[RMDB]
RNA sequence: GGGAACGACUCGAGUAGAGUCGAAAAUCCUAAGUCCAAGCGUACGGGAAGCGAGGUAGCCGAGAGCUCGGAAACGAGCUCGUUUGACGCUACUACCCACCGCUUCCCGACACGCUUGGAUAUGGAAAACGAGGCGUCUGUUCGCAGACGCCUCGAACGUAUAGUAAGAGUUCGCUCUUACUAUACGAAAAGAAACAACAACAACAAC
Reactivity to DMS in 0.01 (KOAc 150mM, MgCl2 10mM, bicine 150mM(pH8.5), 24C), signal-to-noise 1, nucleotides 027 to 156: u010c010c010u000a080a230g050u000c010c020a030a020g000c010g060u000a300c010g030g000g000a050a000g020c000g030a180g010g000u000a020g000c000c040g030a190g000a030g020c000u000c000g050g010a140a130a300c000g020a040g040c000u010c000g030u000u000u020g050a150c260g000c010u020a020c000u020a000c000c020c010a300c090c000g000c000u010u010c000c010c030g020a030c080a000c010g020c010u000u000g000g020a010u000a100u000g020g010a120a100a100a190c040g000a000g040g020c000g040u000c010u000g030u000u010c180g040c000a030g030a000c020g000c010c000u030c010g000a010a040
Reactivity to 2A3 in 0.01 (KOAc 150mM, MgCl2 10mM, bicine 150mM(pH8.5), 24C), signal-to-noise 2, nucleotides 027 to 156: u000c000c000u010a070a020g030u020c000c000a000a000g010c000g020u020a010c020g030g000g010a000a010g010c010g000a020g030g000u000a000g020c020c040g080a060g000a000g040c000u000c020g020g000a070a050a060c000g010a000g000c010u020c000g000u020u050u110g020a030c040g000c000u020a010c010u190a080c030c070c030a090c010c010g000c000u000u010c000c000c000g000a000c000a000c000g000c000u000u000g000g000a000u000a010u010g000g010a020a030a000a030c020g010a000g010g000c000g010u000c000u020g070u060u140c280g000c100a000g000a000c000g000c010c000u000c000g000a000a000
This 207-nucleotide RNA was probed chemically with DMS and 2A3.
The RNA was probed in 150 mM KOAc, 10 mM MgCl2 and 150 mM bicine (pH 8.5) at 24 C.
2A3 adducts were read by reverse transcription with SuperScript II with manganese.
For 2A3, 3,432 sequencing reads were counted.